Source: RMDB library OK2TST, as collected in RNAgym. Structure probing data (DMS and 2A3) for a 177-nucleotide construct.

RNA sequence: GGGAACGACUCGAGUAGAGUCGAAAAAUUAUAGAUUGGCAUGUUUUGCACAUCUAGCCAAAGCCAUGAUGGACUUUGGUUCAAACCACCAGGACAUGUUGUACUCACCUCCUACUGUCAGUUAUAAAUACUUCCUCUAAUUCGUUAGAGGAAGUAUAAAAGAAACAACAACAACAAC
Reactivity to DMS in 0.01 (KOAc 150mM, MgCl2 10mM, bicine 150mM(pH8.5), 24C), signal-to-noise 9, nucleotides 027 to 126: a090u010u010a080u000a040g010a070u000u000g020g000c010a030u000g010u010u010u000u000g010c030a070c100a040u000c040u000a050g000c000c010a010a010a020g010c010c000a150u010g020a180u010g010g010a070c000u000u000u000g010g010u000u010c150a050a080a120c100c040a100c200c040a060g000g010a040c060a040u000g010u000u000g010u000a050c060u000c060a050c060c030u000c030c010u000a050c090u000g010u000c060a070g010u010u010a090u010a070a080
Reactivity to 2A3 in 0.01 (KOAc 150mM, MgCl2 10mM, bicine 150mM(pH8.5), 24C), signal-to-noise 2, nucleotides 027 to 126: a030u170u120a070u020a070g040a060u030u090g030g000c010a000u010g110u090u200u080u080g100c040a050c000a080u040c050u010a000g010c000c000a000a030a000g000c000c000a080u210g060a150u230g100g000a130c000u000u000u000g000g000u000u040c040a080a050a050c030c000a050c000c030a010g030g020a010c010a030u110g010u100u110g030u100a120c010u010c050a080c010c010u030c000c030u030a050c000u020g080u110c020a040g000u070u090a140u060a140a100
The RNA was probed in 150 mM KOAc, 10 mM MgCl2 and 150 mM bicine (pH 8.5) at 24 C.
The DMS profile rests on 18,431 reads.
For 2A3, 2,299 sequencing reads were counted.
DMS adducts were read by reverse transcription with MarathonRT.